[RMDB]
Conditions: 150 mM KOAc, 10 mM MgCl2 and 150 mM bicine (pH 8.5), 24 C. This 207-nucleotide RNA was probed chemically with DMS and 2A3. Values cover nucleotides 27 to 156. For DMS, 4,764 sequencing reads were counted. DMS (dimethyl sulfate) methylates the pairing face of unpaired adenines and cytosines. DMS adducts were read by reverse transcription with MarathonRT. The 2A3 profile rests on 6,649 reads.
RNA sequence: GGGAACGACUCGAGUAGAGUCGAAAAACGCGGAGUACGCUCCGCGACAACACUUCUUUCGACCCGCUAACCGAGACCUAUGGGUCGUUAAAUUACGUCUCUAUCUUACUCACAUAACGUCGCACAAAAAACGUGGUUCGGUUCGCCGAACCACGAACUUUUUAUGCAAGUUCGCUUGCAUAAAAAGAAAAGAAACAACAACAACAAC
Reactivity to DMS in 0.01 (KOAc 150mM, MgCl2 10mM, bicine 150mM(pH8.5), 24C), signal-to-noise 2, nucleotides 027 to 156: a080c000g000c040g030g020a050g060u000a070c300g040c000u000c000c000g040c010g000a050c050a060a140c070a120c080u000u000c060u000u000u000c000g000a020c000c010c000g000c090u000a060a140c050c070g000a090g020a080c030c040u000a110u010g000g020g030u010c010g000u000u010a020a060a090u000u000a030c050g010u000c010u000c030u020a080u010c080u000u000a070c040u000c040a130c090a090u020a050a090c080g010u000c020g020c060a110c090a010a060a040a060a090a120c030g040u010g010g010u000u000c000g000g020u010u000c300g040c020c010g000a020a010c010c020a010c000g030a020a020
Reactivity to 2A3 in 0.01 (KOAc 150mM, MgCl2 10mM, bicine 150mM(pH8.5), 24C), signal-to-noise 7, nucleotides 027 to 156: a000c010g000c000g000g010a010g010u040a030c150g040c050u000c000c000g020c010g040a000c000a060a020c030a030c040u130u110c010u070u270u160c010g000a000c010c010c000g020c170u190a030a010c040c030g010a010g020a040c010c010u040a080u230g010g000g000u000c000g020u010u020a000a010a030u150u080a010c010g010u000c000u000c010u010a110u080c050u080u110a100c040u080c080a070c030a180u180a180a060c090g060u050c050g030c110a030c080a050a040a030a060a070a040c050g010u000g000g000u000u000c000g000g040u030u070c180g010c060c000g000a000a000c000c000a000c000g000a000a000